Structure probing data (2A3 and DMS) for a 207-nucleotide construct. The DMS profile rests on 2,497 reads. Reactivities are rounded to 0.1 and cut off at 0 and 3. Reactivities are given for positions 27 through 156.
RNA sequence: GGGAACGACUCGAGUAGAGUCGAAAAUCCCGCCGAAACAGGGUUUUCACCCUUCCUUUCUUCGGGUGUCCUUCCUCGCGCCCGCAGGACCACCCCUCGCCCCCUUUGCGCUGUCGCUUCGGCUACUACCCGGUGGAAACAACUGAAGCUCCCGAGACACACACUAAAAGUUCGCUUUUAGUGUGUGAAAAGAAACAACAACAACAAC
Reactivity to 2A3 in 0.01 (KOAc 150mM, MgCl2 10mM, bicine 150mM(pH8.5), 24C), signal-to-noise 1, nucleotides 027 to 156: u000c040c000c000g060c060c020g080a040a040a060c300a100g020g010g000u050u070u270u260c110a070c010c010c030u040u060c000c010u010u150u070c020u020u030c020g000g020g000u040g100u090c010c060u050u050c020c030u060c040g010c000g000c040c000c000g000c030a000g010g080a050c050c000a000c000c030c000c010u030c000g030c000c000c000c000c000u000u040u070g010c020g000c020u020g040u090c000g030c070u020u010c010g000g000c000u040a130c010u000a010c080c030c000g010g030u060g030g020a000a160a040c050a090a070c040u040g010a060a000g010c030u000c040c000c000g000a000g030a020
Reactivity to DMS in 0.01 (KOAc 150mM, MgCl2 10mM, bicine 150mM(pH8.5), 24C), signal-to-noise 1, nucleotides 027 to 156: u000c000c020c020g060c090c090g030a130a050a100c030a060g000g010g020u030u000u000u010c120a090c000c010c000u010u010c040c030u000u000u000c020u010u000c080g000g010g040u010g020u020c040c020u000u000c030c040u000c010g040c050g000c030c040c040g000c080a060g000g050a100c090c050a140c010c030c040c020u000c040g010c050c020c000c030c030u000u010u010g030c060g000c030u010g010u010c060g070c010u020u000c060g030g010c010u000a110c080u000a140c010c040c050g010g030u000g000g000a150a140a090c060a110a140c000u000g000a090a140g000c010u000c020c020c000g020a140g010a300